Chemical mapping of a 177-nucleotide RNA with 2A3 and DMS.
2A3 adducts were read by reverse transcription with SuperScript II with manganese.
DMS (dimethyl sulfate) methylates the pairing face of unpaired adenines and cytosines.
The reactions ran in a buffer of 150 mM KOAc, 10 mM MgCl2 and 150 mM bicine (pH 8.5), at 24 C.
[RMDB]
RNA sequence: GGGAACGACUCGAGUAGAGUCGAAAACCUCUAGUAUUCGUACUAGAGGCACAUGCCGCCCCAACGGGUUCCUGACGGGGCGGAUUCACUUUAAAUGGAGCAAAGCCGCUGUGUUCGCACAGCGGAACCUUAGUGCCAUGUUCGCAUGGCACUAAGGAAAAGAAACAACAACAACAAC
Reactivity to 2A3 in 0.01 (KOAc 150mM, MgCl2 10mM, bicine 150mM(pH8.5), 24C), signal-to-noise 2, nucleotides 027 to 126: c000c000u000c000u000a000g000u000a010u030u050c200g050u050a020c000u000a000g010a000g010g060c030a030c010a080u160g020c010c000g010c010c000c000c000a010a060c070g200g000g030u160u060c010c000u010g000a010c070g000g010g000g020c010g000g000a000u030u020c000a010c010u080u160u280a100a140a160u240g040g030a040g040c030a110a040a050g060c000c000g000c010u010g010u010g020u070u100c290g000c080a000c000a000g030c030g000g000a000a000
Reactivity to DMS in 0.01 (KOAc 150mM, MgCl2 10mM, bicine 150mM(pH8.5), 24C), signal-to-noise 2, nucleotides 027 to 126: c000c000u000c000u000a000g000u010a010u000u010c150g030u000a000c000u000a010g030a000g010g000c050a030c110a150u000g030c000c030g010c000c000c000c000a090a300c060g000g030g030u000u000c050c010u020g010a060c300g010g010g000g010c000g050g000a000u000u000c040a060c160u000u010u000a080a100a130u020g020g000a020g010c220a120a160a160g000c000c000g010c010u000g010u000g000u000u010c200g020c010a000c000a000g000c010g000g010a020a010
Description:
Source: RMDB library M2PK50, as collected in RNAgym. For DMS the reverse transcriptase was MarathonRT.